[RMDB]
RNA sequence: GGGAACGACUCGAGUAGAGUCGAAAAGAUAUGGAUAAGGCUAGCUCGAGUGUCGGAAACGACACGAGAGCUUGGACCCUUCAUCCUAAGUCAAACUUGCGCCAAUUCUUCGGAAUUGGCGCAAGAAGUUGCUAAAACUGUUCGCAGUUUUAGCAACAAAAGAAACAACAACAACAAC
Reactivity to DMS in 0.01 (KOAc 150mM, MgCl2 10mM, bicine 150mM(pH8.5), 24C), signal-to-noise 1, nucleotides 027 to 126: g010a060u000a300u020g010g000a010u010a050a020g010g000c020u000a010g020c010u000c020g000a300g010u000g020u020c000g010g030a060a150a240c000g000a000c010a010c020g010a300g000a010g000c000u000u010g040g010a130c300c010c000u000u010c190a010u000c000c000u020a080a130g010u000c030a090a070a190c010u000u000g000c000g020c000c000a000a040u010u000c000u000u010c200g010g000a000a000u000u000g000g000c000g000c010a000a000g030a030a100